[RMDB]
RNA sequence: GGGAACGACUCGAGUAGAGUCGAAAACACAGCAUUCGCACUAUGUAGGGAGGCCAUAGUGUUGGAAUGGCUUGGAGCAGCGGGUGCUGCUGCAUUUUCUUCUGCUCCUGCUUCCUGCAGCCGCUGCACCACGGGCAGCAUUCGUGCUGCCCGUGGUAAAAGAAACAACAACAACAAC
Reactivity to DMS in 0.01 (KOAc 150mM, MgCl2 10mM, bicine 150mM(pH8.5), 24C), signal-to-noise 1, nucleotides 027 to 126: c120a240c130a010g000c050a090u010u010c100g010c000a060c010u000a030u010g010u020a110g000g000g020a010g000g000c110c010a010u000a030g070u000g040u000u090g060g020a080a010u010g000g020c060u010u020g010g020a040g020c030a020g020c300g010g000g000u020g000c000u000g010c100u010g000c060a030u010u000u030u060c000u000u050c040u000g000c020u010c010c070u000g010c060u010u000c000c010u010g000c090a020g000c020c030g000c020u000g000c000
Reactivity to 2A3 in 0.01 (KOAc 150mM, MgCl2 10mM, bicine 150mM(pH8.5), 24C), signal-to-noise 3, nucleotides 027 to 126: c110a000c020a000g050c000a010u020u030c000g010c000a000c010u020a010u030g040u060a200g050g000g000a030g050g010c010c000a000u010a000g050u020g040u060u130g110g050a030a030u050g070g040c010u020u090g040g020a020g010c010a000g010c030g020g000g080u100g030c020u040g050c030u050g000c040a070u050u040u090u030c000u100u040c000u010g020c010u030c030c010u030g000c010u040u010c000c020u020g000c010a010g050c030c030g060c040u030g000c020